[RMDB]
RNA sequence: GGGAACGACUCGAGUAGAGUCGAAAACACGACCUAUGACUUACACUCUUGUAUUACUGUUUUAUGUCAUUGGAUUCAUUGUUGUAGCCUCAAGUUCAACUAUAUCUGCUUAUGUUAUAGGUUCGGUUUUCAUUUCAAUCGGCAGCUCAGGGUUAGACCGUAUAAAUCCUUUCGAGGAUUUAUACGGAAAAGAAACAACAACAACAAC
Reactivity to DMS in 0.01 (KOAc 150mM, MgCl2 10mM, bicine 150mM(pH8.5), 24C), signal-to-noise 2, nucleotides 027 to 156: c020a110c070g020a100c020c010u010a040u000g010a030c000u010u010a140c160a090c040u010c040u010u010g030u000a100u010u000a050c040u000g020u000u010u010u000a070u020g020u000c050a090u000u010g010g010a110u000u020c060a090u000u000g020u000u000g000u000a070g000c020c060u010c060a060a130g010u000u010c030a030a090c070u010a100u000a050u000c040u000g030c150u010u000a040u000g010u010u000a040u010a030g020g020u010u000c030g070g010u000u000u000u010c060a120u000u000u000c080a020a090u010c020g020g000c040a090g010c020u000c010a110g010g030g010u000u010a110g010a170
Reactivity to 2A3 in 0.01 (KOAc 150mM, MgCl2 10mM, bicine 150mM(pH8.5), 24C), signal-to-noise 6, nucleotides 027 to 156: c140a030c030g020a020c010c000u000a010u020g000a020c020u060u100a030c050a030c060u120c080u120u140g100u200a120u170u130a090c060u060g150u090u090u070u100a070u150g050u060c050a040u020u090g030g000a030u100u110c030a050u050u170g020u030u020g050u070a040g010c010c020u080c070a060a030g010u040u070c020a050a020c020u040a040u020a050u180c050u060g070c060u170u110a070u240g020u040u010a030u000a030g020g000u090u130c020g010g010u020u010u040u040c010a030u050u090u030c040a060a060u050c010g040g000c020a010g030c030u010c040a060g060g010g060u070u080a040g070a070